Structure probing data (DMS and 2A3) for a 177-nucleotide construct.

RNA sequence: GGGAACGACUCGAGUAGAGUCGAAAACACGAACGUUGGCUAAUCCUGGUCGGACAUCAGGGGGUUAGUGCAAUGGCAUAAGCCAACUUGGCGCUAAUAGAUACUAAUCGUAGCAUAGCUGAAUAAAAGGUACCUAUCCAUUCGUGGAUAGGUACCUAAAAGAAACAACAACAACAAC
Reactivity to DMS in 0.01 (KOAc 150mM, MgCl2 10mM, bicine 150mM(pH8.5), 24C), signal-to-noise 2, nucleotides 027 to 126: c090a170c190g000a060a100c210g020u000u000g000g000c040u000a160a050u070c130c020u000g060g000u000c250g000g030a300c100a060u010c020a000g030g000g000g040g000u000u000a020g000u000g000c000a030a020u020g040g050c100a060u000a100a110g020c000c010a050a070c090u040u000g010g010c060g050c020u040a020a090u070a130g060a030u030a040c100u030a000a080u070c160g070u000a010g080c130a060u000a110g000c030u000g000a070a030u050a040a040a060
Reactivity to 2A3 in 0.01 (KOAc 150mM, MgCl2 10mM, bicine 150mM(pH8.5), 24C), signal-to-noise 2, nucleotides 027 to 126: c030a010c010g060a220a010c050g030u010u010g000g000c010u000a000a000u030c000c000u000g130g000u020c080g080g000a030c000a080u010c010a020g060g000g000g060g080u000u040a080g000u030g070c080a030a120u070g050g030c000a040u100a230a020g050c000c020a030a100c140u030u130g070g010c000g000c080u010a030a020u110a300g000a010u060a040c000u060a070a000u040c040g020u000a000g000c040a070u050a030g000c010u010g030a040a010u150a200a100a010
2A3 adducts were read by reverse transcription with SuperScript II with manganese. For 2A3, 901 sequencing reads were counted.